[RMDB]
About this RNA: Conditions: 150 mM KOAc, 10 mM MgCl2 and 150 mM bicine (pH 8.5), 24 C. An RNA of 177 nucleotides, treated with DMS and 2A3 and read out base by base.
RNA sequence: GGGAACGACUCGAGUAGAGUCGAAAAAAAUCAAGCUGGAUCGAAACCGACAGCAACGGCACACCGCAGCUGCGCUACGACGGACAGAUCGCGGUGCGCUAUAUGGAGUAUCCGGUGCUGACUGGGACAGGGGGAGUAGGUUCGCCUACUCCCCCUGAAAAGAAACAACAACAACAAC
Reactivity to DMS in 0.01 (KOAc 150mM, MgCl2 10mM, bicine 150mM(pH8.5), 24C), signal-to-noise 2, nucleotides 027 to 126: a030a010a030u080c170a040a110g000c080u030g050g000a060u020c180g020a010a170a060c030c020g010a140c080a090g000c080a110a080c160g020g020c100a020c010a030c040c000g000c010a070g000c020u000g000c070g020c080u020a110c200g000a180c130g000g000a050c000a000g000a040u020c030g020c040g000g000u000g020c000g000c010u000a050u000a080u060g000g010a000g040u020a070u110c030c040g020g060u000g000c030u000g000a060c060u020g000g020g000a250
Reactivity to 2A3 in 0.01 (KOAc 150mM, MgCl2 10mM, bicine 150mM(pH8.5), 24C), signal-to-noise 2, nucleotides 027 to 126: a000a000a000u190c100a090a000g000c030u060g010g040a100u070c040g040a150a080a060c070c000g040a020c000a020g000c020a050a050c080g030g030c050a000c000a000c000c000g010c040a000g000c000u100g020c000g000c060u150a110c030g210a060c090g070g000a020c090a030g110a080u110c080g000c000g020g000u060g020c020g000c000u000a000u040a030u300g030g020a000g060u030a050u060c010c000g020g000u000g020c000u000g090a300c060u050g000g070g000a070
For DMS the reverse transcriptase was MarathonRT.